Record summary: An RNA of 177 nucleotides, treated with DMS and 2A3 and read out base by base. Reactivities are given for positions 27 through 126. 2A3 adducts were read by reverse transcription with SuperScript II with manganese. Conditions: 150 mM KOAc, 10 mM MgCl2 and 150 mM bicine (pH 8.5), 24 C. It was measured as part of the RMDB libraries RFM100 and RFMREP.
RNA sequence: GGGAACGACUCGAGUAGAGUCGAAAAUUGAGAACUCUGAUGAGGUAUUGUAGCAUCGGGUUACGGUAGCCGAGUCAGUUGAUUCUCAUCAUGUGGCACUUCGACGGUGAACAGUUAUGGCCUCUGACGUUUAUUCAGGUUUCGACCUGAAUAAACGAAAAGAAACAACAACAACAAC
Reactivity to DMS in 0.01 (KOAc 150mM, MgCl2 10mM, bicine 150mM(pH8.5), 24C), signal-to-noise 5, nucleotides 027 to 126: u020u030g010a030g010a010a010c010u000c000u010g010a030u000g010a300g000g020u000a010u000u010g000u020a000g000c000a300u030c250g010g020g000u000u000a000c000g020g020u000a050g030c010c010g000a300g010u000c020a020g020u020u010g000a130u000u000c000u010c000a050u010c080a050u010g000u010g000g000c020a060c050u000u000c080g020a110c110g000g000u000g000a090a070c090a070g010u000u000a080u010g010g000c030c040u010c030u010g010a270
Reactivity to 2A3 in 0.01 (KOAc 150mM, MgCl2 10mM, bicine 150mM(pH8.5), 24C), signal-to-noise 7, nucleotides 027 to 126: u080u040g000a000g000a000a000c000u000c000u010g010a010u010g000a010g020g000u010a020u020u000g010u010a000g010c030a060u240c260g260g190g000u000u000a000c000g000g040u040a050g300c000c000g000a000g010u000c000a010g050u040u030g030a130u010u000c000u000c000a000u010c000a010u100g060u070g060g000c010a010c080u080u060c100g090a060c040g030g080u050g030a070a040c010a020g020u050u120a080u160g060g020c020c000u000c020u030g040a020